This 177-nucleotide RNA was probed chemically with DMS and 2A3. 2A3 adducts were read by reverse transcription with SuperScript II with manganese. Values cover nucleotides 27 to 126. The data come from the RNA Mapping Database (RMDB), library OK1LIB. For DMS the reverse transcriptase was MarathonRT. The DMS profile rests on 4,554 reads.
RNA sequence: GGGAACGACUCGAGUAGAGUCGAAAAUUUCAAGGCAGCUGCGUGUACGGAAGUUCCUGCCGCCAUCGCCACACGAUCGAAGGCGUCGAUGUUCGCGAUUAUGUGUGGGGCGCCUCUAAGGACGGUGGCUCCAGGUUACGUUCGCGUGACCUGGAGCAAAAGAAACAACAACAACAAC
Reactivity to DMS in 0.01 (KOAc 150mM, MgCl2 10mM, bicine 150mM(pH8.5), 24C), signal-to-noise 3, nucleotides 027 to 126: u000u020u020c050a120a080g040g010c040a040g010c020u000g010c050g020u000g020u000a120c110g000g000a120a120g000u000u000c030c010u040g000c070c040g060c040c010a050u000c070g020c000c030a030c030a040c080g010a080u020c070g010a140a090g010g000c000g000u000c100g010a130u010g020u040u020c120g020c030g000a000u020u020a060u030g050u000g010u000g000g000g020g020c000g000c020c010u000c060u020a070a110g000g000a050c080g030g000u000g000
Reactivity to 2A3 in 0.01 (KOAc 150mM, MgCl2 10mM, bicine 150mM(pH8.5), 24C), signal-to-noise 5, nucleotides 027 to 126: u070u080u050c030a020a040g070g000c000a040g010c040u060g010c030g100u170g070u100a060c040g060g050a090a010g040u070u060c010c020u030g020c030c000g000c000c000a100u080c030g000c020c000a030c000a000c020g030a060u070c030g050a090a040g060g000c020g000u050c040g100a170u170g030u160u190c020g000c000g000a000u080u110a060u300g100u030g030u030g010g070g010g000c000g000c000c000u020c030u080a100a070g020g020a040c020g030g040u020g040